RNA sequence: GGGAACGACUCGAGUAGAGUCGAAAACGCGCCUUGAACUGCUCGGGCGUGAGGUACUUGCGAUAGUUCGCGCUGCCCGGCUGGUUCACUUCGCGCACGAGCGAAUCGAGCUGCGCUUCGUUGCGGAAAUUAUGGCUCAUUUCGAUGAGCCAUAAUUAAAAGAAACAACAACAACAAC
Reactivity to DMS in 0.01 (KOAc 150mM, MgCl2 10mM, bicine 150mM(pH8.5), 24C), signal-to-noise 5, nucleotides 027 to 126: c090g020c030g020c190c050u000u000g010a010a120c160u010g000c000u000c000g000g000g020c010g020u000g010a020g010g010u000a030c060u000u000g020c070g000a100u010a080g010u010u000c050g010c060g020c090u000g010c020c020c040g010g010c040u010g000g000u000u010c160a030c080u000u000c020g000c010g000c020a020c030g000a010g000c000g000a070a130u000c040g010a050g010c110u000g020c040g010c030u000u010c090g000u000u000g010c060g000g010a090
Reactivity to 2A3 in 0.01 (KOAc 150mM, MgCl2 10mM, bicine 150mM(pH8.5), 24C), signal-to-noise 3, nucleotides 027 to 126: c030g030c020g020c020c010u030u030g020a040a010c050u110g020c040u040c010g000g000g020c010g020u020g000a030g020g030u060a040c030u020u100g050c020g070a070u090a170g090u080u100c040g000c000g010c080u070g000c000c000c020g070g000c030u060g000g000u050u060c020a000c020u020u040c040g000c000g000c030a010c000g000a000g000c020g030a040a090u040c040g000a010g050c090u090g000c070g000c040u080u120c060g070u070u070g060c030g030g030a040